[RMDB]
RNA sequence: GGGAACGACUCGAGUAGAGUCGAAAAAACAGACGAACCAAUGUAUGGAGCGUAUGCAAACCAUCCGCCCAAGAUUCUCCACAUGGUAGCUAGGCUGUCGUCAACUUGGCGGAUGCAAGCCAACGUGUGAUAUUGAUCCGCAGCCACCACAAUGCGCGGAGGCGCUAUCAUUCGUGAUAGCGCCUCCAAAAGAAACAACAACAACAAC
Reactivity to 2A3 in 0.01 (KOAc 150mM, MgCl2 10mM, bicine 150mM(pH8.5), 24C), signal-to-noise 1, nucleotides 027 to 156: a010a010c070a050g120a090c020g040a040a030c020c010a010a030u100g000u110a070u030g050g000a080g040c020g040u100a090u150g010c050a010a110a000c010c000a000u010c000c010g090c070c100c000a030a000g010a070u270u060c030u090c040c000a030c030a070u020g060g020u000a020g050c060u060a030g080g000c000u030g010u080c020g010u060c040a060a070c080u040u010g000g000c000g000g050a010u020g010c000a000a030g000c000c000a100a020c090g010u090g000u090g040a000u040a070u130u050g050a120u050c020c000g100c000a010g000c000c050a030c000c170a010c010a040a160u300g000c010g000c030
Chemical mapping of a 207-nucleotide RNA with 2A3. The reactions ran in a buffer of 150 mM KOAc, 10 mM MgCl2 and 150 mM bicine (pH 8.5), at 24 C.